[RMDB]
RNA sequence: GGGAACGACUCGAGUAGAGUCGAAAAGACCGUUAUCGGAUGGGGUGCCGCCUGAUAUGCAUCUGGCGCCCAAGCGUUGAGCGGGAAGAGCUCUGCCUCGACGGCUAGGCCGAAGAUUAUCAGGGCGAUUACCCUACCAGUUCGCUGGUAGGGUAAUAAAAGAAACAACAACAACAAC
Reactivity to 2A3 in 0.01 (KOAc 150mM, MgCl2 10mM, bicine 150mM(pH8.5), 24C), signal-to-noise 3, nucleotides 027 to 126: g050a030c010c000g040u080u090a100u140c070g060g120a090u060g010g010g000g010u050g050c020c030g020c020c010u010g010a030u050a050u220g130c070a030u000c030u030g020g000c130g000c010c000c000a010a000g020c030g010u030u040g030a000g000c010g040g020g000a150a060g160a060g130c030u020c010u080g040c030c010u000c030g010a010c000g020g020c020u060a040g110g000c010c030g020a030a020g000a020u040u030a010u110c010a010g030g020g030c000g020
Reactivity to DMS in 0.01 (KOAc 150mM, MgCl2 10mM, bicine 150mM(pH8.5), 24C), signal-to-noise 5, nucleotides 027 to 126: g010a180c010c020g010u000u000a130u000c050g010g010a110u000g010g010g000g030u010g050c200c050g010c020c010u000g000a030u000a060u000g030c240a050u000c020u000g020g010c220g030c020c000c010a010a020g010c010g030u000u000g000a030g010c030g010g010g000a120a140g010a170g010c110u000c010u000g010c240c040u000c010g010a060c010g000g000c010u010a120g010g000c000c000g020a060a050g000a030u000u010a040u000c020a030g000g010g000c060g010

This 177-nucleotide RNA was probed chemically with 2A3 and DMS.
The reactions ran in a buffer of 150 mM KOAc, 10 mM MgCl2 and 150 mM bicine (pH 8.5), at 24 C.
For DMS, 6,160 sequencing reads were counted.